Source: RMDB library M2RFPK, as collected in RNAgym. This 207-nucleotide RNA was probed chemically with 2A3.
RNA sequence: GGGAACGACUCGAGUAGAGUCGAAAAACGCUUCACAAUGUGCGGCAAAGAAACAUUGUUUAUGCAAAGGCACUUCGCAAUGUGUGCUCAAACAUUGCUUAUUCAAACACGCUUCACAAUGGGCGACAAAACUUCACGGUCUUCGGACCGUGAAGAAUCUAGACCUAGCGUUCGCGCUAGGUCUAGAAAAAGAAACAACAACAACAAC
Reactivity to 2A3 in 0.01 (KOAc 150mM, MgCl2 10mM, bicine 150mM(pH8.5), 24C), signal-to-noise 2, nucleotides 027 to 156: a000c000g000c030u020u010c020a030c020a030a000u010g000u010g010c000g060g030c090a090a100a240g080a020a090a000c000a000u000u000g120u020u100u080a110u160g070c070a070a060a030g200g010c000a000c010u010u020c040g000c020a020a010u020g030u000g030u010g040c040u140c260a010a040a010c010a010u000u000g000c000u100u050a220u090u220c090a000a090a040c070a010c030g040c010u140u160c080a020c060a130a160u180g030g000g000c000g040a030c060a000a120a020a020c000u000u000c000a000c000g000g000u000c000u050u080c100g070g000a000c020c020g000u000g000a000a000g000a000a000